RNA sequence: GGGAACGACUCGAGUAGAGUCGAAAACAACAGUUACAGCAUGUGCAACAGGUACAAACUCAAUCGGAGAAGCAUUUAAAAUUGUGCAACGCGGUGAUGCAGAUGCAAUGAUUACUGGUGGUACGGACUCCACAGUGAUUUUCGAAUCACUGUGGAGAAAAGAAACAACAACAACAAC
Reactivity to 2A3 in 0.01 (KOAc 150mM, MgCl2 10mM, bicine 150mM(pH8.5), 24C), signal-to-noise 3, nucleotides 027 to 126: c010a020a020c000a010g020u050u060a000c010a030g050c010a040u040g010u000g210c020a090a020c010a090g090g060u110a030c050a050a130a070c050u040c080a060a180u140c060g010g090a090g010a120a010g070c020a010u030u070u290a140a240a160a180u190u140g030u030g010c010a010a020c060g000c040g110g050u040g020a020u070g000c000a000g010a140u010g030c000a020a170u090g070a110u060u120a000c010u020g020g000u010g000g020u070a060c060g030g030a010
Reactivity to DMS in 0.01 (KOAc 150mM, MgCl2 10mM, bicine 150mM(pH8.5), 24C), signal-to-noise 3, nucleotides 027 to 126: c030a090a060c090a040g020u000u000a090c080a110g000c040a060u000g020u010g000c030a080a090c100a140g010g000u020a060c190a030a070a130c070u010c100a130a050u010c140g000g000a100g010a140a200g000c020a050u000u010u010a090a090a110a080u020u000g030u010g000c020a050a130c060g000c030g000g030u000g010a050u010g000c030a020g030a010u000g000c000a070a130u000g020a110u000u000a060c020u000g010g000u000g000g010u010a150c120g010g020a180